An RNA of 207 nucleotides, treated with 2A3 and read out base by base.
For 2A3 the reverse transcriptase was SuperScript II with manganese.
The reactions ran in a buffer of 150 mM KOAc, 10 mM MgCl2 and 150 mM bicine (pH 8.5), at 24 C.

RNA sequence: GGGAACGACUCGAGUAGAGUCGAAAAAUGAGUCUUCGGACUCAUACCGUCGCGUACUACUUGAAUGAAGUUUCGUUGAAAUUAUGACCCUCCCAAAUAGGAGCAUAAUGGAGAAAUCAAAGUCAAGUAUCGCAUUUGUGAGACGUUCGCGUCUCAAGUUCUGCGUAUCGUUCGCGAUACGCAGAACAAAAGAAACAACAACAACAAC
Reactivity to 2A3 in 0.01 (KOAc 150mM, MgCl2 10mM, bicine 150mM(pH8.5), 24C), signal-to-noise 2, nucleotides 027 to 156: a000u010g000a000g010u000c000u000u150c250g180g000a000c010u020c010a010u030a040c000c000g200u130c040g000c010g040u150a140c030u000a000c000u040u000g000a010a000u080g020a300a040g000u000u030u010c030g040u070u040g000a020a040a020u000u000a010u100g110a280c030c000c050u040c010c070c140a130a300a140u300a030g000g010a050g010c010a000u000a000a000u020g010g000a000g010a000a010a010u110c040a000a190a000g020u020c000a040a000g010u000a020u190c020g020c000a030u020u150u200g150u060g000a000g000a000c000g010u050u080c300g090c000g120u000c000u000c000a000a000